Source: RMDB library M2RFPK, as collected in RNAgym. The record gives the reactivity of an RNA of 207 nucleotides to DMS and 2A3. The RNA was probed in 150 mM KOAc, 10 mM MgCl2 and 150 mM bicine (pH 8.5) at 24 C.

RNA sequence: GGGAACGACUCGAGUAGAGUCGAAAAACACCAAAACUGAAAACGGAAGGCAAUCCUUCCACGACGAUACUUACUUUCCUUUGAUCGUCGUUACUACUGGUAUAGCCACAAAGGAGAACAAACAUGAGCGCGGACACUGACUUCGGUCAGUGUCCAACAAUUCUAUCAGGUUCGCCUGAUAGAAUUGAAAAGAAACAACAACAACAAC
Reactivity to DMS in 0.01 (KOAc 150mM, MgCl2 10mM, bicine 150mM(pH8.5), 24C), signal-to-noise 2, nucleotides 027 to 156: a080c100a130c020c020a010a060a080a280c090u000g000a080a040a060a180c040g010g020a050a010g060g000c110a160a140u000c010c010u000u010c000c010a110c020g010a020c000g010a040u000a030c040u010u000a030c040u030u020u000c040c020u000u000u000g010a030u000c010g010u000c000g010u010u000a060c030u010a050c020u010g050g040u000a110u000a130g000c060c030a090c070a080a070a110g000g010a100g030a090a200c080a070a060a130c090a110u020g000a100g000c030g000c110g030g000a020c010a000c010u000g010a000c000u000u000c300g100g020u000c000a010g050u000g010u000c000c000a010a030
Reactivity to 2A3 in 0.01 (KOAc 150mM, MgCl2 10mM, bicine 150mM(pH8.5), 24C), signal-to-noise 8, nucleotides 027 to 156: a010c070a080c020c040a080a060a030a040c140u170g080a110a070a010a000c060g010g000a010a000g020g020c140a050a180u260c010c000u000u020c010c000a000c000g000a000c000g000a000u110a180c030u100u020a020c010u080u180u100c010c010u030u000u050g010a010u020c000g010u000c000g020u020u050a020c030u030a030c020u020g030g000u070a070u130a200g100c020c010a050c040a040a050a020g040g030a040g020a070a020c060a100a070a020c050a120u200g080a050g110c140g000c090g040g000a000c000a000c000u010g010a000c000u040u050c140g030g000u000c000a000g000u000g000u000c000c000a000a000

For 2A3, 6,788 sequencing reads were counted. The DMS profile rests on 3,508 reads.